This 207-nucleotide RNA was probed chemically with 2A3.
The data come from the RNA Mapping Database (RMDB), library M2RFPK.
Values cover nucleotides 27 to 156.
Conditions: 150 mM KOAc, 10 mM MgCl2 and 150 mM bicine (pH 8.5), 24 C.
[RMDB]
RNA sequence: GGGAACGACUCGAGUAGAGUCGAAAACCGAAGCCCCAUUGAGGGAUAAUACAGGCUCUCCCAUCCAAAUCCUAUUCCAACACGUCCUCGUCGUACAGAGUGGUAACAUGUGUCACCACAUAUCCAACAUAGUGUCGCAUCUUCGGAUGCGACACAAGCAAACAAAUGACUUCGGUCAUUUGUUUGCAAAAGAAACAACAACAACAAC
Reactivity to 2A3 in 0.01 (KOAc 150mM, MgCl2 10mM, bicine 150mM(pH8.5), 24C), signal-to-noise 2, nucleotides 027 to 156: c000c000g000a060a090g050c000c000c000c000a150u070u090g060a230g060g050g000a050u130a070a000u010a110c060a040g030g050c040u000c000u020c030c000c000a030u050c050c030a070a090a100u000c000c020u060a100u090u020c060c000a050a000c020a040c060g000u070c000c000u070c020g090u010c010g000u050a070c050a060g070a020g060u080g050g010u070a090a010c010a140u170g150u050g040u140c080a020c050c000a010c060a040u150a020u000c020c000a000a020c020a240u110a110g010u000g010u000c000g000c000a020u000c000u040u050c140g170g020a000u000g000c000g000a000c000a000c000a020a000
For 2A3 the reverse transcriptase was SuperScript II with manganese.